[RMDB]
RNA sequence: GGGAACGACUCGAGUAGAGUCGAAAAAUAGCCUGUAAGUGCUGAAGCUGGGAUUUGAAGCUCUGCAGUUUGGUUCCAGAGAGCUUUGUUCAUGAGGUUUCUUGGGAAGAUGGCUUCUAAACAAGUAAGAGAUAUUUUCAGGUAGCCUAGUAAAUAGACUACACAAAUCCUUCGGGAUUUGUGUAGUAAAAGAAACAACAACAACAAC
Reactivity to 2A3 in 0.01 (KOAc 150mM, MgCl2 10mM, bicine 150mM(pH8.5), 24C), signal-to-noise 1, nucleotides 027 to 156: a000u060a000g030c000c010u030g000u090a100a010g060u040g080c000u060g050a110a050g010c020u080g000g000g050a070u070u110u100g050a050a000g000c000u060c070u050g000c050a020g010u060u210u070g060g000u030u030c020c040a000g000a010g000a040g100c000u080u030u030g020u040u040c100a080u030g010a010g040g000u030u100u090c030u060u020g040g000g030a010a000g000a040u020g010g010c000u050u080c050u090a080a090a030c020a000a060g140u160a160a000g080a000g040a140u010a070u130u090u010u030c000a000g030g000u010a040g000c000c030u020a010g040u050a050a030a030u300a280g020